[RMDB]
This 207-nucleotide RNA was probed chemically with DMS and 2A3. The DMS profile rests on 2,117 reads. The reactions ran in a buffer of 150 mM KOAc, 10 mM MgCl2 and 150 mM bicine (pH 8.5), at 24 C. For 2A3 the reverse transcriptase was SuperScript II with manganese. It was measured as part of the RMDB library OK3TST.
RNA sequence: GGGAACGACUCGAGUAGAGUCGAAAAGAGGGAAAGAAGAAUCUGGAAACCAAGCGAAUGCCCAGAAAUUGGGGAAUAGUUGGGAAAUAAAUGUGGUGCACGUGUAUCAUGGAUAUUAUAUACUGUAUGCAUAGAGAUUCGAGAACUACAUGGAUGGUCUGCUUUCAUAGUUCGCUAUGAAAGCAGAAAAAGAAACAACAACAACAAC
Reactivity to DMS in 0.01 (KOAc 150mM, MgCl2 10mM, bicine 150mM(pH8.5), 24C), signal-to-noise 1, nucleotides 027 to 156: g000a110g010g030g020a040a060a090g010a100a030g010a060a140u000c060u000g030g020a060a140a150c030c050a070a150g050c090g000a100a130u010g030c010c020c000a100g030a120a040a130u000u010g000g000g000g000a040a040u000a050g000u010u000g000g010g020a090a070a110u000a030a100a100u010g000u000g000g030u000g000c030a060c070g010u000g010u000a030u000c040a040u000g000g010a090u010a030u010u000a100u000a080u000a150c080u000g030u000a030u000g000c000a090u000a080g020a180g000a110u000u010c030g010a130g010a030a080c020u010a030c010a050u010g010g040a110u000g000g000
Reactivity to 2A3 in 0.01 (KOAc 150mM, MgCl2 10mM, bicine 150mM(pH8.5), 24C), signal-to-noise 4, nucleotides 027 to 156: g050a030g030g020g010a050a040a000g030a020a030g020a040a060u030c060u070g040g030a060a060a060c060c030a060a010g050c030g070a130a070u150g020c030c000c010a030g060a030a150a020u140u050g010g000g010g020a010a070u050a050g040u050u030g030g020g040a020a120a060u160a040a090a010u070g010u030g040g000u010g000c060a010c080g020u030g010u030a020u050c030a030u030g080g030a040u050a040u210u110a080u080a030u030a120c030u040g000u060a030u030g060c010a010u080a080g040a000g000a020u050u100c060g000a030g060a080a040c030u100a030c020a050u090g060g020a020u080g050g050